RNA sequence: GGGAACGACUCGAGUAGAGUCGAAAAGAUAUGGAGCACUACCCACCGAAUUGAUUGUGAUGACCUCGGAAACGAGCAAGCAAUUGGUUCGAGGUGCUCCUAAGUCAAACGUCUCUUCGGAGACGAAGGCUUGUAUAAACUUCGGUUUAUACAAGCCAAAAGAAACAACAACAACAAC
Reactivity to 2A3 in 0.01 (KOAc 150mM, MgCl2 10mM, bicine 150mM(pH8.5), 24C), signal-to-noise 1, nucleotides 027 to 126: g080a040u170a160u300g000g020a000g070c000a020c040u150a190c030c020c000a030c000c010g020a000a020u010u040g020a020u020u000g030u010g120a300u170g110a110c010c020u000c000g000g000a060a050a100c000g010a030g040c020a070a060g000c010a000a010u000u000g030g030u000u000c000g000a020g060g000u000g000c000u000c000c000u000a020a010g120u040c180a070a080a180c000g030u020c020u080c000u070u090c300g070g000a000g020a020c010g010a090a020
Reactivity to DMS in 0.01 (KOAc 150mM, MgCl2 10mM, bicine 150mM(pH8.5), 24C), signal-to-noise 2, nucleotides 027 to 126: g000a080u000a160u010g010g010a010g030c010a000c000u000a040c010c020c010a300c130c010g000a040a010u000u010g000a000u000u000g000u000g000a100u020g000a050c300c000u000c000g000g040a100a050a170c010g010a010g000c040a070a180g000c010a040a000u000u000g010g000u000u000c000g000a090g020g000u000g030c000u010c010c000u010a010a060g000u020c110a090a090a240c010g010u000c000u000c010u030u000c210g020g010a040g000a000c020g000a080a030